[RMDB]
RNA sequence: GGGAACGACUCGAGUAGAGUCGAAAAAACAGUCCCAUUUAUUUGUGGUACAAUUAGUAAGGAUAAAAUGAAUUUCUAUACAAUUAUGGGAAAGGUAUGGUGAAUUGAAUGGCUCCUAAGUUACAAGAAUGAGUACACAAUUCGUUGUGUACUCAUUAAAAGAAACAACAACAACAAC
Reactivity to DMS in 0.01 (KOAc 150mM, MgCl2 10mM, bicine 150mM(pH8.5), 24C), signal-to-noise 7, nucleotides 027 to 126: a070a040c190a130g010u000c000c000c010a120u010u000u000a070u010u000u000g020u000g010g010u000a110c080a060a070u010u000a080g010u010a060a170g010g010a090u000a050a070a080a080u000g010a090a080u000u000u000c030u010a080u000a040c020a050a070u000u000a060u010g000g000g000a040a070a060g010g000u010a020u000g000g020u010g010a050a050u000u010g010a060a060u000g010g010c100u000c020c020u000a040a070g000u000u000a060c160a080a100g000
Reactivity to 2A3 in 0.01 (KOAc 150mM, MgCl2 10mM, bicine 150mM(pH8.5), 24C), signal-to-noise 6, nucleotides 027 to 126: a010a000c040a030g050u000c020c000c000a000u030u140u040a100u010u050u060g030u030g030g000u100a040c020a070a100u060u030a100g060u090a100a070g020g020a060u100a170a160a040a070u100g040a040a070u030u030u060c020u020a070u000a090c020a050a060u110u060a070u220g020g000g020a020a030a040g030g000u020a010u040g010g020u050g020a030a020u030u010g050a100a050u040g020g010c010u010c010c010u040a080a080g060u090u090a040c020a040a030g080